RNA sequence: GGGAACGACUCGAGUAGAGUCGAAAACAAGAUCGGUGGAUAGCAGCCCUAUCAAUAUCUAGGAGAACUGUGCUAUGUUUAGAAGAUUAGGUAGUCUCUAAACAGAACAAUUUACCUGCUGAACAAACGCUCCACAUAUCUUCGGAUAUGUGGAGCGAAAAGAAACAACAACAACAAC
Reactivity to DMS in 0.01 (KOAc 150mM, MgCl2 10mM, bicine 150mM(pH8.5), 24C), signal-to-noise 1, nucleotides 027 to 126: c020a040a140g000a120u040c010g040g040u000g020g000a020u010a060g000c070a060g030c070c000c000u000a120u000c100a200a090u070a020u060c250u020a030g070g000a220g000a040a000c060u000g000u000g000c040u000a120u000g000u000u000u000a000g000a060a040g000a000u000u000a020g000g010u070a140g000u000c020u000c000u000a000a000a020c000a000g000a040a110c030a100a000u000u000u020a030c080c000u000g030c020u020g000a140a210c100a020a260a290
Reactivity to 2A3 in 0.01 (KOAc 150mM, MgCl2 10mM, bicine 150mM(pH8.5), 24C), signal-to-noise 2, nucleotides 027 to 126: c020a000a020g030a160u080c010g050g050u050g080g010a040u050a060g050c000a010g010c060c000c000u020a030u100c080a060a070u090a060u220c100u150a000g000g070a170g020a020a040c040u010g010u020g030c030u030a010u070g020u010u000u000a130g010a300a020g000a010u090u020a000g120g080u050a010g020u000c000u000c000u000a000a000a000c000a000g050a010a010c210a040a030u040u020u010a040c000c000u080g010c020u080g000a030a010c050a010a030a000
Structure probing data (DMS and 2A3) for a 177-nucleotide construct.
The 2A3 profile rests on 1,329 reads.
The DMS profile rests on 1,252 reads.
Source: RMDB library RFM100, as collected in RNAgym.